[RMDB]
RNA sequence: GGGAACGACUCGAGUAGAGUCGAAAAGGGGUCCUCGCUUGUCAGCAGAUGACCAAAUCUUGGAUUUAAUGCUGAAGCCUCCACGGCAUUUGUCAGAUUUGGUCUGCUUGGAUUUAGCGAGGACGGAGGCACCCAAAGUGUACGUUCGCGUACACAACAAAAUUAGACUGUUCGCAGUCUAAUUUUGAAAAGAAACAACAACAACAAC
Reactivity to 2A3 in 0.01 (KOAc 150mM, MgCl2 10mM, bicine 150mM(pH8.5), 24C), signal-to-noise 5, nucleotides 027 to 156: g060g000g020g000u000c010c000u010c000g000c000u040u040g020u060c030a060g030c040a050g130a300u180g090a090c020c000a010a010a010u010c040u100u230g130g010a060u300u260u220a030a010u020g000c000u030g050a210a100g060c000c030u000c010c000a030c000g010g000c010a000u000u000u050g030u030c050a040g010a040u010u010u000g000g000u000c010u010g000c000u060u170g130g010a040u220u190u170a000g000c000g000a020g000g000a000c000g000g010a000g000g000c020a050c010c020c010a060a140a020g000u000g000u000a010c010g020u010u100c210g000c000g120u000a000c000a000c010a010a020
Reactivity to DMS in 0.01 (KOAc 150mM, MgCl2 10mM, bicine 150mM(pH8.5), 24C), signal-to-noise 2, nucleotides 027 to 156: g000g010g010g000u000c010c010u000c010g020c030u010u010g000u000c040a100g000c070a130g010a140u010g020a050c030c020a010a040a010u000c030u010u000g050g010a080u010u010u000a030a020u000g030c010u000g000a060a150g040c060c020u010c020c020a300c070g000g000c000a010u000u010u000g000u020c030a090g020a020u000u000u010g030g010u020c000u000g030c050u000u000g020g010a090u000u010u000a050g020c020g020a030g040g050a010c010g000g010a070g030g070c030a110c010c010c020a080a130a150g010u010g010u000a000c000g020u010u010c300g030c010g020u000a020c000a010c000a130a290